[RMDB]
Background:
Structure probing data (DMS and 2A3) for a 177-nucleotide construct. The 2A3 profile rests on 902 reads. Conditions: 150 mM KOAc, 10 mM MgCl2 and 150 mM bicine (pH 8.5), 24 C. DMS adducts were read by reverse transcription with MarathonRT. For DMS, 798 sequencing reads were counted.
RNA sequence: GGGAACGACUCGAGUAGAGUCGAAAACUAGGAUCGCUAGUACUAGGGUACGCUCAUGAGGUACACAUGCGCUAGUGCUAUGAUCUCCAUGUCUAGAGACGACUAGUGAUCGCACUACAUGAUAGUAACGCCGUGCACAAUUCGUUGUGCACGGCGUAAAAGAAACAACAACAACAAC
Reactivity to DMS in 0.01 (KOAc 150mM, MgCl2 10mM, bicine 150mM(pH8.5), 24C), signal-to-noise 1, nucleotides 027 to 126: c020u000a170g000g020a040u000c000g040c030u040a020g050u010a040c050u000a060g020g000g000u020a030c080g020c070u000c000a080u000g030a050g030g010u000a030c050a020c060a110u000g000c070g050c060u020a030g050u020g010c020u000a080u000g020a080u000c020u000c060c100a040u000g010u020c120u010a080g000a080g040a300c030g010a050c010u000a010g010u020g030a090u000c010g000c040a170c050u010a010c040a070u000g000a140u000a070g020u000a090
Reactivity to 2A3 in 0.01 (KOAc 150mM, MgCl2 10mM, bicine 150mM(pH8.5), 24C), signal-to-noise 1, nucleotides 027 to 126: c040u050a010g020g060a090u000c010g000c020u020a010g010u000a050c050u030a010g130g040g000u120a000c050g010c030u030c020a120u130g060a010g020g050u120a040c080a000c000a030u060g060c040g030c090u050a040g000u000g050c020u110a060u220g070a100u010c010u050c030c030a110u120g100u000c050u090a040g000a010g000a110c050g010a050c010u100a020g000u000g120a020u020c020g070c000a010c020u020a010c040a140u120g090a170u090a090g140u090a010